[RMDB]
About this RNA:
Conditions: 150 mM KOAc, 10 mM MgCl2 and 150 mM bicine (pH 8.5), 24 C. Structure probing data (2A3) for a 207-nucleotide construct. Reactivities are given for positions 27 through 156. The data come from the RNA Mapping Database (RMDB), library ARCHII. For 2A3, 972 sequencing reads were counted.

RNA sequence: GGGAACGACUCGAGUAGAGUCGAAAAAGGUUUCGACUUAGGAAUGAAGUGUUAAUCGCAUGCGGAGGGCGUUGGCUGGCCUCCUAAAAAGCCGACAAAACAAUAAAUGCCGAACCUAAGGCUAAAUGCGAAAUUAUCAGUUUCUCUGAACUCUCUGCCAUACCAACAGGUUCGCCUGUUGGUAUGGAAAAGAAACAACAACAACAAC
Reactivity to 2A3 in 0.01 (KOAc 150mM, MgCl2 10mM, bicine 150mM(pH8.5), 24C), signal-to-noise 2, nucleotides 027 to 156: a010g080g000u050u030u040c030g030a010c010u090u120a020g040g040a030a100u150g030a110a100g040u020g020u150u150a090a100u040c020g000c040a020u070g080c010g030g000a010g000g010g030c040g060u020u040g010g030c040u040g000g050c000c020u010c000c000u060a060a090a020a000a000g000c000c010g020a010c100a020a130a010a000c030a030a030u140a180a040a030u120g020c000c000g030a060a020c010c060u030a030a040g000g000c020u040a080a030a100u050g010c010g030a110a000a000u080u050a130u070c010a010g050u030u090u000c050u000c010u020g070a100a100c000u000c000u020c010u080g010